[RMDB]
RNA sequence: GGGAACGACUCGAGUAGAGUCGAAAACAGCUCAAGUAUGACUCCGUUCACGGCAGAUUCCCCUUCCCUUGCGACGUCAAGGACGGCAAGCUUGUUGUGAACGGCAAGACCAUUGAGGUCUACUCCGAUAAUCAAUAUGGUUCGCCAUAUUGAUUAUAAAAGAAACAACAACAACAAC
Reactivity to DMS in 0.01 (KOAc 150mM, MgCl2 10mM, bicine 150mM(pH8.5), 24C), signal-to-noise 9, nucleotides 027 to 126: c180a120g010c040u000c030a050a070g010u010a070u010g010a300c080u000c010c010g000u000u000c000a010c010g010g010c010a020g000a110u000u000c250c140c010c050u010u010c150c000c000u000u000g010c010g010a170c220g000u010c010a040a030g000g020a050c280g010g000c220a030a040g000c080u000u000g020u000u000g010u000g000a010a020c000g000g010c200a050a030g000a110c110c060a170u000u000g010a070g010g010u000c030u000a080c090u000c030c110g010
Reactivity to 2A3 in 0.01 (KOAc 150mM, MgCl2 10mM, bicine 150mM(pH8.5), 24C), signal-to-noise 9, nucleotides 027 to 126: c030a030g060c020u020c050a050a080g090u100a140u200g050a070c020u000c030c000g000u000u000c000a000c010g010g000c010a000g020a090u070u090c020c000c000c020u060u120c020c000c000u010u010g030c110g190a240c050g130u250c030a010a010g020g000a010c010g010g000c010a020a040g030c040u080u070g000u000u010g000u000g000a000a000c000g000g000c010a030a000g010a010c020c020a050u040u160g060a040g010g020u000c010u020a040c030u040c020c020g030
The record gives the reactivity of an RNA of 177 nucleotides to DMS and 2A3.
Reactivities are given for positions 27 through 126.
Values are in units of 0.01, from 0 to 300, in steps of 10.
Conditions: 150 mM KOAc, 10 mM MgCl2 and 150 mM bicine (pH 8.5), 24 C.
The data come from the RNA Mapping Database (RMDB), library OK2TST.